An RNA of 177 nucleotides, treated with 2A3 and DMS and read out base by base. For DMS the reverse transcriptase was MarathonRT. Reactivities are rounded to 0.1 and cut off at 0 and 3. High 2A3 reactivity points to a flexible backbone, as in loops and unpaired stretches.

[RMDB]
RNA sequence: GGGAACGACUCGAGUAGAGUCGAAAAGAGAUGAGUCUCAACACAUCUGAAUGUGUUGUACAUACCGUUGUGACUACGAUAUGUACGGUGUAUACAGUUAUACACCGAGACUCCUCGUAGUCACAUAGCUAGUGCGAGAUUUCGAUCUUGCACUAGCAAAAGAAACAACAACAACAAC
Reactivity to 2A3 in 0.01 (KOAc 150mM, MgCl2 10mM, bicine 150mM(pH8.5), 24C), signal-to-noise 3, nucleotides 027 to 126: g060a000g000a020u080g000a000g010u010c000u000c000a000a000c000a000c000a010u090c140u260g180a300a060u020g000u000g000u000u000g000u000a000c000a000u020a020c000c040g030u050u120g000u000g000a000c010u010a000c000g000a000u000a010u080g000u000a000c000g020g000u000g000u010a010u010a020c100a050g050u100u020a000u010a010c000a000c000c010g000a000g000a000c000u000c000c000u000c000g000u000a000g000u000c000a000c000a000u010a000
Reactivity to DMS in 0.01 (KOAc 150mM, MgCl2 10mM, bicine 150mM(pH8.5), 24C), signal-to-noise 6, nucleotides 027 to 126: g000a060g020a090u010g010a010g010u000c000u000c000a000a000c000a000c000a010u000c300u050g020a120a060u000g000u000g010u000u000g010u000a000c000a010u000a110c110c040g000u030u010g020u000g000a000c000u000a000c000g000a020u000a000u000g010u000a000c000g010g000u000g020u000a000u000a040c300a170g010u040u020a010u000a010c000a010c000c000g000a010g000a010c000u000c010c080u000c000g000u000a010g000u000c000a000c000a040u030a060